[RMDB]
RNA sequence: GGGAACGACUCGAGUAGAGUCGAAAAGACCGCUGAAUGCGGAAGUACUAGAUCAACUAGAAAGUAGAUAAAUACAAAAGCUACGUCUCGAAACUAGUUGAUCUAGUCCAGUCGAGACGUAGUAAGACACUCAUGGUCGAUUCGUCGACCAUGAGUGAAAAGAAACAACAACAACAAC
Reactivity to 2A3 in 0.01 (KOAc 150mM, MgCl2 10mM, bicine 150mM(pH8.5), 24C), signal-to-noise 3, nucleotides 027 to 126: g010a000c000c030g000c000u090g240a250a110u300g010c000g000g050a000a010g050u030a070c030u000a000g020a010u000c000a000a000c000u010a030g050a090a160a000g170u160a020g060a250u220a080a130a020u210a080c070a050a170a000a020g000c000u000a000c000g000u000c000u000c000g090a090a110a070c000u000a000g010u000u050g000a000u010c000u000a000g000u010c000c010a040g050u040c000g010a000g000a000c000g000u000a000g000u030a010a040g010a000
Reactivity to DMS in 0.01 (KOAc 150mM, MgCl2 10mM, bicine 150mM(pH8.5), 24C), signal-to-noise 2, nucleotides 027 to 126: g000a150c000c000g010c020u000g080a080a110u070g000c000g000g000a040a170g000u120a160c070u000a000g000a010u000c000a010a010c000u000a000g020a100a150a160g040u050a100g020a040u060a030a080a030u020a080c210a080a280a090a210g000c000u000a000c000g000u000c000u000c000g040a000a180a170c000u000a010g000u000u010g030a010u000c000u030a000g030u000c020c000a020g010u050c050g000a050g000a000c000g000u000a000g000u010a030a060g030a170